[RMDB]
RNA sequence: GGGAACGACUCGAGUAGAGUCGAAAAAACAAGCAGUCGCCGAUGCGUUGUGGGCCGCCCAUAACGGCGGAACUCCAUGGGACUAUGGUGCGACGAACAACGGCGUCCCGGUGGACGGUCCGAAUGGACCUCGAUAACAGUUCGCUGUUAUCGAGGUAAAAGAAACAACAACAACAAC
Reactivity to DMS in 0.01 (KOAc 150mM, MgCl2 10mM, bicine 150mM(pH8.5), 24C), signal-to-noise 7, nucleotides 027 to 126: a090a050c120a090a090g020c120a140g010u000c010g020c010c020g010a090u000g010c060g010u000u000g020u000g010g000g010c020c010g000c000c000c080a080u020a090a110c240g000g010c010g000g000a030a060c110u010c020c020a030u010g010g010g010a070c050u000a110u010g010g010u010g020c010g000a050c040g000a100a080c090a060a170c030g000g000c030g010u000c010c010c100g010g020u010g000g000a050c040g010g010u010c000c010g010a080a090u010g010g000
Reactivity to 2A3 in 0.01 (KOAc 150mM, MgCl2 10mM, bicine 150mM(pH8.5), 24C), signal-to-noise 5, nucleotides 027 to 126: a010a000c080a040a000g080c050a030g020u010c000g000c010c010g070a040u110g010c070g030u090u090g020u040g020g020g000c010c010g020c010c000c010a110u170a130a030c050g020g010c000g010g010a040a040c030u010c020c010a040u060g030g020g120a070c030u050a070u110g120g000u240g020c030g020a000c010g020a050a010c040a040a010c000g030g000c010g010u010c010c000c030g090g050u250g010g010a000c010g000g070u030c010c010g030a040a040u090g070g040